This 207-nucleotide RNA was probed chemically with 2A3. For 2A3 the reverse transcriptase was SuperScript II with manganese.
[RMDB]
RNA sequence: GGGAACGACUCGAGUAGAGUCGAAAACAAUGCGCUUGAUCCGAUGGAUGAGAGACAACGUAUUUGCCUCGAGCCAAUAUACGACCCCGCCCGCUCUGUUUGGUUCGAUCCUGAUGCGAAGAAAUAUGAUAAAUCUGACGCAGAAUGGGCUUUUUGCGCAGCAGCUAUUGUUCGCAAUAGCUGCUGCAAAAGAAACAACAACAACAAC
Reactivity to 2A3 in 0.01 (KOAc 150mM, MgCl2 10mM, bicine 150mM(pH8.5), 24C), signal-to-noise 1, nucleotides 027 to 156: c030a000a000u010g010c010g040c100u030u040g050a040u060c000c020g000a000u140g050g210a220u170g040a030g010a010g000a180c000a070a020c000g030u000a010u000u040u040g040c030c020u050c040g000a050g000c010c010a080a040u070a000u010a060c070g040a020c020c030c000c030g010c000c010c010g000c000u090c000u040g040u030u010u010g050g000u000u110c000g050a070u050c030c020u060g040a050u070g050c040g060a150a020g070a010a180a000u300a160u200g110a030u100a190a110a050u000c040u030g040a040c010g000c000a010g020a130a030u010g000g000g020c000u010u030u000u080u030g000c070
Source: RMDB library OK3TST, as collected in RNAgym.